[RMDB]
RNA sequence: GGGAACGACUCGAGUAGAGUCGAAAAUAAGGGGCGCUAUGCUCGUUCGUCCAAGGAGCAGCGUGACCAGCGGGAGGGAGUAAGUCGACGUCCCCGGCAUGUGGGGCGGGGAACUCCACUGGCCGGAUGCUGCUCAAAAUUUCGAUUUUGAGCAGCAAAAAGAAACAACAACAACAAC
Reactivity to DMS in 0.01 (KOAc 150mM, MgCl2 10mM, bicine 150mM(pH8.5), 24C), signal-to-noise 2, nucleotides 027 to 126: u020a160a130g010g000g000g010c000g000c030u000a040u020g020c010u000c000g020u000u000c050g000u000c140c130a120a110g000g000a010g020c020a040g000c030g010u000g000a110c030c020a120g020c090g030g010g020a120g010g000g000a090g000u010a090a110g010u020c070g010a110c080g030u020c070c050c000c010g020g000c090a100u020g010u030g000g000g000g000c020g010g000g000g000a080a120c010u000c000c000a030c040u010g000g010c000c000g030g010a180
Reactivity to 2A3 in 0.01 (KOAc 150mM, MgCl2 10mM, bicine 150mM(pH8.5), 24C), signal-to-noise 1, nucleotides 027 to 126: u180a050a030g000g010g060g000c030g000c060u050a040u240g020c000u020c010g080u080u040c050g040u040c080c010a080a080g130g020a000g000c020a020g000c010g070u080g060a160c010c020a020g010c050g030g020g040a200g050g000g000a000g050u110a140a010g080u140c030g010a050c060g100u090c060c020c000c000g000g000c070a030u080g060u080g000g000g040g000c050g020g000g020g010a010a000c000u000c000c000a030c020u050g140g010c020c000g000g010a000
An RNA of 177 nucleotides, treated with DMS and 2A3 and read out base by base.
Reactivities are rounded to 0.1 and cut off at 0 and 3.
The reactions ran in a buffer of 150 mM KOAc, 10 mM MgCl2 and 150 mM bicine (pH 8.5), at 24 C.
Values cover nucleotides 27 to 126.